[RMDB]
RNA sequence: GGGAACGACUCGAGUAGAGUCGAAAAGCUCCCUGGGUGGUCUAAGUCCUGAGUACAGGACAGUCGUCAGUAGUUCGACGUGAGCAGAAGCCCACCUCGAGAUGCUACGUGGACGAGGGCAUGCCCAUCGUACGUACUACUUCGGUAGUACGUACGAAAAAGAAACAACAACAACAAC
Reactivity to 2A3 in 0.01 (KOAc 150mM, MgCl2 10mM, bicine 150mM(pH8.5), 24C), signal-to-noise 4, nucleotides 027 to 126: g060c030u000c020c000c000u010g010g020g010u020g010g000u000c030u080a080a110g000u000c000c010u050g020a110g150u130a160c040a020g010g010a000c000a010g030u010c000g010u000c000a020g000u000a000g010u070u030c000g010a010c000g010u010g000a020g000c020a050g110a300a040g030c000c000c000a020c000c000u000c000g060a070g030a160u230g020c010u020a070c140g300u090g090g000a000c000g000a020g000g000g020c050a120u080g000c020c010c000a000
Reactivity to DMS in 0.01 (KOAc 150mM, MgCl2 10mM, bicine 150mM(pH8.5), 24C), signal-to-noise 2, nucleotides 027 to 126: g050c170u010c000c000c000u000g000g000g040u000g010g010u000c000u000a120a150g020u000c000c000u000g040a300g020u010a150c000a000g020g000a010c000a080g010u000c000g000u010c010a080g000u000a010g000u000u000c010g010a010c260g020u000g020a030g020c010a230g000a140a170g020c000c010c000a030c000c040u000c010g000a060g000a090u000g000c010u000a010c020g030u000g010g010a020c010g010a030g010g000g000c020a110u000g020c000c020c010a060